[RMDB]
RNA sequence: GGGAACGACUCGAGUAGAGUCGAAAAGAAUCACCGUACCUAUUUAGGUUUACGCUCCAAGAUCGGUGGAUAGCAGCCCUAUAAAUAUCUAGGAGAACUGUGCUAUGUUUAGAAGAUUAGGUAGUCUAUUACACAGCCAUGUUCGCAUGGCUGUGAAUCAGAACAUGUGUUUCGACACAUGUUCUGAAAAAGAAACAACAACAACAAC
Reactivity to 2A3 in 0.01 (KOAc 150mM, MgCl2 10mM, bicine 150mM(pH8.5), 24C), signal-to-noise 3, nucleotides 027 to 156: g020a010a060u060c010a000c000c000g020u030a010c000c020u090a140u260u300u300a060g020g000u010u020u050a060c030g010c010u050c000c000a000a050g010a060u030c030g010g020u020g030g050a070u120a030g080c060a010g030c020c000c000u070a080u080a140a140a000u130a050u020c020u020a010g040g000a020g030a080a060c070u060g000u000g090c020u060a050u060g080u060u140u070a140g010a190a050g010a120u070u110a070g010g110u010a050g050u020c030u030a110u100u120a100c010a000c000a010g000c010c000a000u010g010u030u040c160g000c110a000u000g010g030c010u000g000u000g010a000a010
Reactivity to DMS in 0.01 (KOAc 150mM, MgCl2 10mM, bicine 150mM(pH8.5), 24C), signal-to-noise 2, nucleotides 027 to 156: g000a110a140u000c000a090c030c040g010u000a090c010c000u000a230u020u000u010a060g010g050u000u000u010a090c060g050c010u010c020c020a070a070g030a040u000c040g020g030u000g000g020a120u000a120g010c130a190g040c020c020c010u000a190u000a030a050a070u000a050u010c070u000a060g000g010a070g020a130a070c060u000g030u000g020c020u000a070u000g020u000u000u000a100g010a070a190g010a070u000u020a120g010g010u000a080g010u000c050u000a090u010u000a200c010a010c010a010g040c000c000a020u000g000u000u000c280g030c010a040u000g000g010c020u020g010u000g000a020a070
The record gives the reactivity of an RNA of 207 nucleotides to 2A3 and DMS.
For 2A3, 1,411 sequencing reads were counted.
For DMS, 3,128 sequencing reads were counted.
Conditions: 150 mM KOAc, 10 mM MgCl2 and 150 mM bicine (pH 8.5), 24 C.
The data come from the RNA Mapping Database (RMDB), library M2RFPK.
DMS adducts were read by reverse transcription with MarathonRT.
Values cover nucleotides 27 to 156.